[RMDB]
RNA sequence: GGGAACGACUCGAGUAGAGUCGAAAAACACAAAGACGCACCAACCGGCGCACAAACAUCUCACUAUACUUUACCUUCAAUUGUCUAUCACAUGGUAACAAGCGCCCACGAAACGUUCACAGUGAUACGACCCUGAAGAAUUCGUUCUUCAGGGUCGAAAAGAAACAACAACAACAAC
Reactivity to 2A3 in 0.01 (KOAc 150mM, MgCl2 10mM, bicine 150mM(pH8.5), 24C), signal-to-noise 4, nucleotides 027 to 126: a000c080a000c030a000a090a030g080a020c010g000c040a020c010c000a050a070c050c020g020g000c010g000c030a020c040a030a190a010c030a080u040c030u020c030a030c030u060a020u080a100c040u090u040u080a060c010c000u050u100c040a060a240u090u120g090u020c070u100a060u090c020a040c070a160u120g060g030u080a100a010c040a080a030g030c000g010c000c030c010a020c020g100a040a100a000c030g010u040u040c080a040c040a030g050u040g030a030u070a140
Reactivity to DMS in 0.01 (KOAc 150mM, MgCl2 10mM, bicine 150mM(pH8.5), 24C), signal-to-noise 2, nucleotides 027 to 126: a040c070a100c030a140a080a030g010a180c000g040c000a070c060c080a070a130c100c130g000g000c060g000c030a010c060a100a080a200c040a040u000c040u010c080a120c030u000a050u010a070c070u000u010u050a010c040c000u000u000c040a080a020u000u000g010u030c070u000a030u030c110a050c150a080u010g000g070u020a010a010c070a050a020g010c000g000c000c000c000a080c140g000a080a010a010c100g030u010u000c060a040c130a100g010u000g000a070u070a170